RNA sequence: GGGAACGACUCGAGUAGAGUCGAAAACGGCUGCGCCGGUGUCGCCGAAGUGCCACGUAAACCGUGGUGUCACAUUAUACCAUCAGGAGGGUAUAACGAGUCGGCUACUGCCGACUCGGGCGUAGCCUCUAGCGAUCGGCUUCGGUCGGUCGCUAGAAAAAGAAACAACAACAACAAC
Reactivity to 2A3 in 0.01 (KOAc 150mM, MgCl2 10mM, bicine 150mM(pH8.5), 24C), signal-to-noise 7, nucleotides 027 to 126: c030g000g000c000u010g000c010g000c000c010g060g000u010g030u020c120g040c140c040g070a130a040g100u100g080c020c010a030c040g060u120a080a100a130c120c000g020u040g010g000u040g020u030c000a000c000a010u000u010a000u000a010c020c020a040u260c060a050g100g100a080g020g060g070u000a010u000a020a010c000g000a000g000u010c000g010g000c040u160a200c160u290g000c000c000g000a000c000u000c000g000g000g000c000g000u000a000g000c000c000
Reactivity to DMS in 0.01 (KOAc 150mM, MgCl2 10mM, bicine 150mM(pH8.5), 24C), signal-to-noise 5, nucleotides 027 to 126: c140g000g000c010u010g010c030g010c000c010g000g010u010g000u010c050g020c070c070g000a110a080g000u040g000c030c020a040c020g010u030a120a110a120c240c010g000u010g000g020u000g000u020c020a030c010a080u000u000a010u000a000c010c000a060u020c120a110g000g010a140g000g000g010u000a000u000a020a030c010g000a020g010u000c000g000g010c000u030a120c300u030g020c010c000g010a000c000u000c000g000g010g000c010g000u000a010g010c000c000
An RNA of 177 nucleotides, treated with 2A3 and DMS and read out base by base. For DMS the reverse transcriptase was MarathonRT. For DMS, 16,525 sequencing reads were counted. For 2A3, 21,960 sequencing reads were counted. The reactions ran in a buffer of 150 mM KOAc, 10 mM MgCl2 and 150 mM bicine (pH 8.5), at 24 C.